[RMDB]
RNA sequence: GGGAACGACUCGAGUAGAGUCGAAAAGAUCCUUUGCAGAUCUCUGGGAUGUCAUUCACUCAUGCUUCUAUGCUGGGUGACUCCUACCAUCAUCACAUUCUUCCAAUUCUCCCAGUAGGGUAUGCAGGUUAGUUACCAAGUUCGCUUGGUAACUAACAAAAGAAACAACAACAACAAC
Reactivity to DMS in 0.01 (KOAc 150mM, MgCl2 10mM, bicine 150mM(pH8.5), 24C), signal-to-noise 3, nucleotides 027 to 126: g000a120u000c010c020u010u010u000g000c060a040g000a140u020c010u000c010u000g010g000g020a030u010g000u010c140a120u010u000c020a020c020u000c020a020u010g040c020u000u000c210u000a050u000g010c060u010g010g020g010u000g000a030c180u000c020c010u020a080c100c060a070u010c030a030u000c050a060c080a080u000u000c050u010u000c030c030a070a150u020u010c140u010c000c000c000a030g010u000a030g020g010g010u020a050u000g010c070a040g010
Reactivity to 2A3 in 0.01 (KOAc 150mM, MgCl2 10mM, bicine 150mM(pH8.5), 24C), signal-to-noise 5, nucleotides 027 to 126: g040a120u050c020c000u050u040u080g000c020a020g010a120u010c020u000c000u040g010g020g000a040u120g100u140c050a110u100u010c010a010c010u000c010a050u270g020c020u270u140c070u210a070u300g000c010u010g020g000g000u000g010a010c010u000c010c010u020a100c030c010a040u070c020a010u030c020a020c000a130u080u020c020u150u000c030c010a080a180u110u010c010u010c010c010c000a030g040u130a030g050g000g020u050a020u020g000c010a000g090

The record gives the reactivity of an RNA of 177 nucleotides to DMS and 2A3. The 2A3 profile rests on 6,155 reads. High 2A3 reactivity points to a flexible backbone, as in loops and unpaired stretches. Conditions: 150 mM KOAc, 10 mM MgCl2 and 150 mM bicine (pH 8.5), 24 C. Source: RMDB library RFMREP, as collected in RNAgym. 2A3 adducts were read by reverse transcription with SuperScript II with manganese.